[RMDB]
RNA sequence: GGGAACGACUCGAGUAGAGUCGAAAAUACAGCUGGUCCUCAUAGGUGUUCCAUUGCAGUGCACUUUAGUGCCCUGGAUGGCACCUGGCCACCUGUCAGGUUUUUGUUAUUAAAAUCUUAUUGUUGCCCUUAAAUUAGAUUUCGAUCUAAUUUAAGGAAAAGAAACAACAACAACAAC
Reactivity to DMS in 0.01 (KOAc 150mM, MgCl2 10mM, bicine 150mM(pH8.5), 24C), signal-to-noise 6, nucleotides 027 to 126: u020a040c010a010g020c160u000g020g010u010c020c300u020c200a130u040a010g010g020u000g000u030u030c030c000a010u000u010g020c020a010g000u000g000c000a010c000u000u010u020a120g020u000g000c000c050c000u000g000g010a010u000g000g000c000a010c000c000u000g010g020c000c000a010c200c000u000g010u000c300a080g000g010u000u000u000u000u000g000u010u010a080u030u010a020a030a040a030u010c010u000u010a100u020u020g010u010u010g000c150
Reactivity to 2A3 in 0.01 (KOAc 150mM, MgCl2 10mM, bicine 150mM(pH8.5), 24C), signal-to-noise 6, nucleotides 027 to 126: u160a000c000a000g000c010u000g000g010u100c020c050u210c130a160u210a070g000g010u010g020u160u120c010c000a010u000u040g150c000a000g000u000g010c000a010c000u220u230u300a070g000u000g000c000c000c010u000g000g020a000u000g000g000c000a000c000c000u000g000g000c000c000a010c020c000u020g010u050c120a110g050g000u010u000u040u050u120g090u100u090a160u100u180a090a030a050a060u060c040u100u140a110u120u120g040u020u060g030c000
Notes
The data come from the RNA Mapping Database (RMDB), libraries RFM100 and RFMREP. This 177-nucleotide RNA was probed chemically with DMS and 2A3. DMS adducts were read by reverse transcription with MarathonRT. For 2A3 the reverse transcriptase was SuperScript II with manganese. High 2A3 reactivity points to a flexible backbone, as in loops and unpaired stretches. Reactivities are given for positions 27 through 126.